About this RNA: Chemical mapping of a 177-nucleotide RNA with DMS and 2A3. It was measured as part of the RMDB library OK2TRN. DMS adducts were read by reverse transcription with MarathonRT. For DMS, 4,589 sequencing reads were counted. For 2A3 the reverse transcriptase was SuperScript II with manganese. The reactions ran in a buffer of 150 mM KOAc, 10 mM MgCl2 and 150 mM bicine (pH 8.5), at 24 C. The 2A3 profile rests on 3,302 reads.
[RMDB]
RNA sequence: GGGAACGACUCGAGUAGAGUCGAAAAUAAGGGUUCCUGGGUCAAGCUGAUCUGCCCAGGGUAAGUCGGGACCUAAGGCGAGGCCGACAGGCGUAGUCGAUGGAUAACCGGUUGAUAUUCCGGUACCCGAUUUCACUGUAUUCGUACAGUGAAAUCGAAAAGAAACAACAACAACAAC
Reactivity to DMS in 0.01 (KOAc 150mM, MgCl2 10mM, bicine 150mM(pH8.5), 24C), signal-to-noise 5, nucleotides 027 to 126: u010a100a130g000g000g000u010u010c000c010u000g010g000g010u010c080a090a060g010c170u010g010a080u010c050u010g000c020c000c000a030g000g010g010u010a060a060g010u000c020g000g010g010a150c000c010u020a130a200g010g000c010g000a190g000g000c020c000g010a110c300a060g000g010c030g010u000a300g010u000c000g020a140u000g010g000a130u010a110a090c000c000g010g000u010u000g010a140u010a150u010u000c000c000g010g000u010a070c030c010
Reactivity to 2A3 in 0.01 (KOAc 150mM, MgCl2 10mM, bicine 150mM(pH8.5), 24C), signal-to-noise 3, nucleotides 027 to 126: u120a020a090g060g000g010u060u070c000c000u030g020g000g000u120c120a090a010g000c150u120g170a150u070c030u070g000c010c000c020a000g030g020g010u010a010a030g040u020c010g000g000g090a100c010c010u030a080a010g010g000c010g010a040g030g000c000c010g030a110c120a110g000g000c010g020u010a010g020u010c010g010a030u070g020g010a030u060a100a070c000c000g010g040u000u040g050a070u030a080u240u030c010c000g000g020u040a050c010c000